Description: Structure probing data (2A3 and DMS) for a 207-nucleotide construct. Reactivities are rounded to 0.1 and cut off at 0 and 3.
[RMDB]
RNA sequence: GGGAACGACUCGAGUAGAGUCGAAAAGGUGUUCGGCGAGAAGAUCGUCAAGGUGAUGGACCUGGCCCUCAAGACCGGAUGCCCGCUGAUCGGCAUCAACGACUCCGGCGGCGCCCGCAUCCAGGAGGGCGUGGCCGCGCUCGGGCUGUACGCCGAGUGGUUAAGGAAAGUUCGCUUUCCUUAACCAAAAAGAAACAACAACAACAAC
Reactivity to 2A3 in 0.01 (KOAc 150mM, MgCl2 10mM, bicine 150mM(pH8.5), 24C), signal-to-noise 2, nucleotides 027 to 156: g080g000u020g040u090u050c040g030g030c050g020a050g030a170a030g070a100u100c060g030u050c080a040a040g000g040u060g060a290u180g050g030a080c010c010u030g100g050c010c040c010u030c020a170a260g070a170c040c050g020g000a000u000g000c000c030c010g090c070u060g030a300u080c030g010g000c050a050u030c020a080a140c050g080a040c030u030c050c000g000g020c000g000g020c000g000c000c000c000g000c010a080u030c040c020a020g020g020a050g000g000g020c010g000u040g050g000c000c000g050c010g000c000u020c030g050g000g000c030u090g040u060a040c050g030c000c000g000a000g020
Reactivity to DMS in 0.01 (KOAc 150mM, MgCl2 10mM, bicine 150mM(pH8.5), 24C), signal-to-noise 2, nucleotides 027 to 156: g020g020u000g030u000u010c000g020g010c020g000a220g020a110a160g010a100u010c060g010u010c000a060a110g000g020u010g000a140u000g030g010a090c010c020u000g010g030c020c010c030u000c030a090a170g030a190c080c040g000g000a040u010g010c040c020c010g020c020u010g000a130u000c040g030g000c080a190u000c050a070a130c090g020a090c040u000c010c010g030g000c010g000g000c030g000c030c030c020g030c030a110u000c040c060a120g020g010a190g030g010g010c000g080u000g020g010c030c010g040c030g040c030u000c050g010g000g000c010u020g000u020a060c060g040c000c000g020a120g010